[RMDB]
RNA sequence: GGGAACGACUCGAGUAGAGUCGAAAAGAAGUGAGAGAAAAGAUGCGAAAAGAAAACCGACCGAAAAGAAAAAGCAUCGAAAAGUCGUGGAAAGGUCGGGAAACACGACGAAAUCUCACUGAAGAAAGGGUAUACAUUAGUUCGCUAAUGUAUACCCAAAAGAAACAACAACAACAAC
Reactivity to DMS in 0.01 (KOAc 150mM, MgCl2 10mM, bicine 150mM(pH8.5), 24C), signal-to-noise 4, nucleotides 027 to 126: g020a210a010g010u010g010a000g000a010g020a140a170a090a080g000a000u010g000c020g010a150a090a130a180g020a130a050a140a160c030c010g010a000c010c010g000a080a060a070a170g030a060a090a100a080a080g010c000a000u000c000g000a070a100a060a180g000u000c000g000u000g040g000a090a080a060g010g010u000c000g000g010g000a090a090a100c000a000c010g000a000c010g020a020a050a160u010c000u000c010a010c000u000g000a150a070g000a050a070a100
Reactivity to 2A3 in 0.01 (KOAc 150mM, MgCl2 10mM, bicine 150mM(pH8.5), 24C), signal-to-noise 3, nucleotides 027 to 126: g110a030a000g010u000g000a020g000a000g000a010a060a120a000g000a000u000g000c020g070a100a080a040a090g140a020a140a060a030c000c000g000a000c000c020g150a170a100a050a060g170a020a150a070a010a000g000c000a000u000c010g000a020a030a010a000g000u000c000g000u010g080g000a090a020a050g010g000u020c010g000g010g030a000a050a000c000a000c000g020a010c000g010a040a020a010u000c000u000c000a000c010u000g010a020a040g050a080a060a020